Structure probing data (2A3 and DMS) for a 207-nucleotide construct. For 2A3, 936 sequencing reads were counted. For DMS the reverse transcriptase was MarathonRT. The DMS profile rests on 1,610 reads.
[RMDB]
RNA sequence: GGGAACGACUCGAGUAGAGUCGAAAAGAAGGAGCCCCAAAGUCCAUACAUUAGAAGAGUUAGUGCUCUCGUCUUUAUUUUCAUAUGUAAAAGGAUCGAUUAUAUAAACAACAAUUGCAGGAGGACACAUCAGGAUGUGGCUGAGUGGGAAGAGAAAACGAUAUCAAAAUUUCGAUUUUGAUAUCGUAAAAGAAACAACAACAACAAC
Reactivity to 2A3 in 0.01 (KOAc 150mM, MgCl2 10mM, bicine 150mM(pH8.5), 24C), signal-to-noise 3, nucleotides 027 to 156: g040a040a040g010g000a020g030c010c010c020c000a060a060a010g040u000c020c000a050u050a100c030a050u140u200a140g010a140a030g020a050g030u080u130a080g050u190g160c010u000c010u020c040g130u020c050u090u240u120a200u120u220u050u090c050a070u130a040u160g030u110a090a050a060a080g020g000a010u050c020g010a010u150u040a060u090a030u080a160a080a010c050a070a000c050a150a110u090u120g000c000a030g040g050a000g030g000a010c000a000c000a070u060c000a010g070g010a020u070g040u070g060g040c050u030g010a030g010u070g000g020g030a070a020g040a010g000a050a140a000
Reactivity to DMS in 0.01 (KOAc 150mM, MgCl2 10mM, bicine 150mM(pH8.5), 24C), signal-to-noise 1, nucleotides 027 to 156: g020a100a110g010g030a130g070c060c000c030c020a040a140a180g020u000c000c020a270u000a070c050a110u010u010a040g080a080a090g010a050g030u000u000a090g040u000g030c010u000c030u000c010g010u000c010u000u010u000a100u030u000u000u000c070a080u000a110u000g030u010a060a090a080a160g010g000a060u000c020g050a140u010u020a040u000a140u000a030a010a090c050a070a120c020a060a070u000u000g050c070a060g000g010a090g030g020a040c040a090c060a040u010c080a000g000g000a070u000g020u000g020g060c020u000g020a050g010u020g000g000g020a040a040g010a040g000a060a100a130